[RMDB]
RNA sequence: GGGAACGACUCGAGUAGAGUCGAAAAAAGUCACCCUCCUCGCAUCGCAAGUUCGUGCUUGCGACUUACACGUAGGGCGAGGGGUGGGCGAAAGUUGCCAUGAGACCGUAACUUUCGUAUUCAUUGAAAAACUACAAAGCCUUCGGGCUUUGUAGAAGAUGAAAUUCUUGUUCGCAAGAAUUUCAUCAAAAGAAACAACAACAACAAC
Reactivity to 2A3 in 0.01 (KOAc 150mM, MgCl2 10mM, bicine 150mM(pH8.5), 24C), signal-to-noise 9, nucleotides 027 to 156: a000a000g130u080c050a050c020c000c000u040c010c000u000c000g000c000a040u010c010g000c000a000a020g010u200u250c120g180u300g090c000u000u000g000c000g000a000c000u060u130a050c100a030c120g170u150a110g050g130g010c010g010a000g000g010g000g010u120g010g020g000c000g000a000a000a000g000u000u000g010c000c020a040u090g080a050g020a260c040c050g010u000a000a000c000u010u000u000c000g000u010a100u070u130c070a060u040u080g040a050a050a020a040a030c000u000a000c000a000a000a000g000c000c000u050u090c220g050g000g000c000u000u000u000g000u000a000g000a000a000
Reactivity to DMS in 0.01 (KOAc 150mM, MgCl2 10mM, bicine 150mM(pH8.5), 24C), signal-to-noise 3, nucleotides 027 to 156: a040a080g020u000c010a050c000c000c000u010c010c010u000c020g060c190a140u010c000g010c000a010a020g030u000u010c280g000u000g020c000u000u000g010c030g020a020c090u010u010a150c090a080c140g010u000a060g020g010g020c020g030a020g000g030g010g030u000g000g010g000c010g000a030a020a020g020u000u000g010c000c020a290u010g030a220g020a180c090c110g000u000a020a020c010u000u000u000c020g030u010a070u010u010c090a180u000u000g010a110a080a080a110a180c000u000a010c000a010a000a010g020c000c020u000u020c300g030g010g010c010u000u000u000g010u000a000g020a010a080